An RNA of 177 nucleotides, treated with 2A3 and read out base by base. The RNA was probed in 150 mM KOAc, 10 mM MgCl2 and 150 mM bicine (pH 8.5) at 24 C. The 2A3 profile rests on 427 reads. Source: RMDB library OK1LIB, as collected in RNAgym. 2A3 adducts were read by reverse transcription with SuperScript II with manganese.

[RMDB]
RNA sequence: GGGAACGACUCGAGUAGAGUCGAAAAUACCUGUCAUUUUAACAGUGAGUGGUACAUAUACUGGAUUACAAUUAUUAUUAACAAUAUUCCAUGGUCCAGAACUAGCAGACAUUAUUCCAUCACUAGCAACUACCCAGUGCUUCGGCACUGGGUAGUUAAAAGAAACAACAACAACAAC
Reactivity to 2A3 in 0.01 (KOAc 150mM, MgCl2 10mM, bicine 150mM(pH8.5), 24C), signal-to-noise 1, nucleotides 027 to 126: u220a050c000c000u000g030u060c220a100u030u040u100u070a100a010c080a070g000u040g150a070g000u050g080g000u000a090c000a220u130a000u000a170c000u000g050g050a030u000u030a010c150a050a000u120u070a000u000u070a100u090u100a190a000c030a170a060u080a030u060u010c010c030a000u030g000g000u000c000c000a000g000a130a080c260u060a030g250c100a000g070a130c010a060u080u100a070u100u040c000c050a000u030c000a070c010u070a000g020c060